This 170-nucleotide RNA was probed chemically with 2A3 and DMS. The DMS profile rests on 25,820 reads. Reactivities are given for positions 27 through 129. The RNA was probed in 150 mM KOAc, 10 mM MgCl2 and 150 mM bicine (pH 8.5) at 24 C. The 2A3 profile rests on 21,175 reads. DMS adducts were read by reverse transcription with MarathonRT.

[RMDB]
RNA sequence: GGGAACGACUCGAGUAGAGUCGAAAAUCUACUAUGAUCUUCUCUCUUCACCCCGUCGAGUGUGACGAGGAGUGUUCUGAAGUAGAGGCUUCAGAUUUAGAAGAAGGUGAAUCAGAGUGCAUUUCUGGGGGGAUUUGGUUCGCCAAAUCCAAAAGAAACAACAACAACAAC
Reactivity to 2A3 in 0.01 (KOAc 150mM, MgCl2 10mM, bicine 150mM(pH8.5), 24C), signal-to-noise 9, nucleotides 027 to 129: u030c010u030a050c010u020a060u080g030a030u000c010u060u020c030u010c000u000c010u040u020c010a030c000c010c010c010g010u020c030g020a170g210u250g090u240g120a000c000g010a180g040g030a130g020u070g080u050u000c000u000g000a000a000g010u110a070g030a080g240g010c010u010u010c000a010g000a030u090u070u150a050g000a060a000g000a010a020g020g020u060g070a040a030u030c000a010g010a020g060u050g030c040a070u010u040u010c030u060g000g000g020g010
Reactivity to DMS in 0.01 (KOAc 150mM, MgCl2 10mM, bicine 150mM(pH8.5), 24C), signal-to-noise 5, nucleotides 027 to 129: u000c060u020a040c040u020a090u050g030a000u020c010u000u000c010u050c090u020c030u000u050c040a190c000c070c000c000g030u000c000g000a170g110u060g000u050g040a000c000g010a040g000g000a090g000u040g000u000u000c030u000g030a030a020g050u020a090g040a140g050g040c010u040u010c000a000g020a040u020u020u050a080g020a040a040g000a070a030g060g020u040g040a070a050u000c030a040g010a040g040u030g000c130a150u000u000u000c030u010g020g010g020g030